[RMDB]
RNA sequence: GGGAACGACUCGAGUAGAGUCGAAAAAGAAGUCAUUCGCAACUACGUGGCACGCGGCGCCGUGAUAUUCAGCAACUCGUACGGAUCGCUCACGGACUACUUCAACCCAUCCGAAGAGAAACACUCCGCGUUAUUCUUUGGCAGCGGGCUAGUCGACCCCGAGAUAGGGAUUCGUCCCUAUCUCGGGAAAAGAAACAACAACAACAAC
Reactivity to 2A3 in 0.01 (KOAc 150mM, MgCl2 10mM, bicine 150mM(pH8.5), 24C), signal-to-noise 1, nucleotides 027 to 156: a000g030a000a020g060u070c080a100u300u070c040g010c070a150a170c070u050a120c040g050u030g010g020c030a010c060g020c000g020g000c080g000c080c000g020u000g030a140u060a070u110u110c010a000g030c030a140a000c010u030c120g070u080a050c060g000g030a030u080c030g020c070u010c040a010c010g000g050a000c040u040a010c000u020u170c000a010a170c000c000c000a000u030c050c050g060a130a000g040a010g070a170a020a000c060a010c060u170c040c050g030c020g000u010u060a150u190u030c100u000u010u010g010g000c030a020g000c050g000g040g000c010u000a010g090u110c080g020a060c000

Structure probing data (2A3) for a 207-nucleotide construct.
2A3 adducts were read by reverse transcription with SuperScript II with manganese.
The RNA was probed in 150 mM KOAc, 10 mM MgCl2 and 150 mM bicine (pH 8.5) at 24 C.
The data come from the RNA Mapping Database (RMDB), library OK3TST.
The 2A3 profile rests on 377 reads.